[RMDB]
RNA sequence: GGGAACGACUCGAGUAGAGUCGAAAACAUGGAGUCUUCGGACUCCAUGCACUACCGAAAUAAUGCCUCGGUAUAAAAGGCAAACCCUUGGAAACAAGGGUACGAUGUCACGAUUCGUCGUGACAAAGUUUAUUCCUACCUUCGGGUAGGAAUAAACAAAAGAAACAACAACAACAAC
Reactivity to DMS in 0.01 (KOAc 150mM, MgCl2 10mM, bicine 150mM(pH8.5), 24C), signal-to-noise 3, nucleotides 027 to 126: c010a000u000g020g010a030g020u000c000u000u030c240g020g000a020c000u000c000c000a000u000g000c060a180c040u010a030c000c000g020a070a100a110u000a100a130u000g000c000c000u000c010g000g000u000a080u000a040a030a060a050g000g000c000a040a120a080c000c000c000u000u000g000g010a150a100a200c000a000a000g000g000g010u010a010c170g000a160u000g010u000c000a000c000g010a030u000u010c160g010u000c000g020u000g000a000c000a020a030a090
Reactivity to 2A3 in 0.01 (KOAc 150mM, MgCl2 10mM, bicine 150mM(pH8.5), 24C), signal-to-noise 3, nucleotides 027 to 126: c000a020u000g000g000a010g000u020c030u070u070c280g080g020a000c000u010c010c000a000u000g000c000a040c030u030a020c000c000g040a050a070a110u240a070a050u090g000c000c000u020c010g000g010u070a040u130a210a060a010a000g010g000c000a000a030a090c010c000c000u020u010g020g010a040a040a000c000a020a000g000g010g000u010a000c010g050a060u070g000u000c000a000c000g010a010u030u040c200g020u000c010g000u150g000a000c000a000a000a000